Source: RMDB library OK2TST, as collected in RNAgym. The record gives the reactivity of an RNA of 177 nucleotides to 2A3 and DMS. For DMS, 6,555 sequencing reads were counted. For DMS the reverse transcriptase was MarathonRT.
[RMDB]
RNA sequence: GGGAACGACUCGAGUAGAGUCGAAAACAACCACGCGACCCGCCUCGUGCUGGGCGAGGGUGCCAAAGUAAUCAAAAGCAUUGGCAAUGUCAUCCAUAUCCAGCUCAGACUCCGCCAAGCGCUUACCUCUCACAAAAUAGUUCGCUAUUUUGUGAGAAAAAGAAACAACAACAACAAC
Reactivity to 2A3 in 0.01 (KOAc 150mM, MgCl2 10mM, bicine 150mM(pH8.5), 24C), signal-to-noise 4, nucleotides 027 to 126: c010a020a040c020c030a040c040g070c030g060a140c000c010c010g040c010c020u030c020g040u060g000c030u050g000g020g000c010g000a040g030g010g050u090g010c010c030a140a080a010g090u110a040a200u190c110a130a150a020a000g020c000a030u000u040g000g000c000a010a050u110g020u020c010a060u050c130c020a030u050a020u160c000c010a010g000c020u010c020a020g000a030c010u030c040c010g000c000c010a040a010g070c040g000c140u030u050a050c010c020
Reactivity to DMS in 0.01 (KOAc 150mM, MgCl2 10mM, bicine 150mM(pH8.5), 24C), signal-to-noise 7, nucleotides 027 to 126: c090a100a160c070c030a120c090g000c050g010a120c020c020c030g020c010c010u010c080g040u000g010c040u000g000g000g010c030g010a060g000g010g010u000g010c080c050a060a060a090g020u020a080a090u010c160a070a060a080a090g010c020a130u000u000g000g000c010a070a110u010g000u000c040a090u010c100c110a080u010a070u000c020c010a030g000c020u000c210a130g000a030c020u000c240c130g010c010c020a040a040g000c130g010c010u000u000a070c120c080